[RMDB]
RNA sequence: GGGAACGACUCGAGUAGAGUCGAAAAUUCUCUGUAAUAACGUCGUUUUGCAAAACUGCAAUGGUCCUGAGCCGAUAAGCCUCUAAUGAAAUUAUAGACUCAUCGGCUCAGGACCAUUGCGGUUGUGGCCUACGAAAUUAUUCGUAAUUUCGUAGGCAAAAGAAACAACAACAACAAC
Reactivity to DMS in 0.01 (KOAc 150mM, MgCl2 10mM, bicine 150mM(pH8.5), 24C), signal-to-noise 2, nucleotides 027 to 126: u000u000c010u010c010u010g010u020a170a070u010a090a120c170g000u000c090g020u000u000u000u010g020c060a070a080a030a020c000u000g010c000a000a020u000g000g000u000c000c010u020g010a030g020c000c000g000a000u000a030a000g010c010c000u000c050u000a020a030u020g010a160a050a300u010u000a030u000a010g010a020c000u000c010a010u000c010g000g000c000u000c000a000g000g000a000c000c000a000u000u000g000c000g000g000u000u000g020u030g010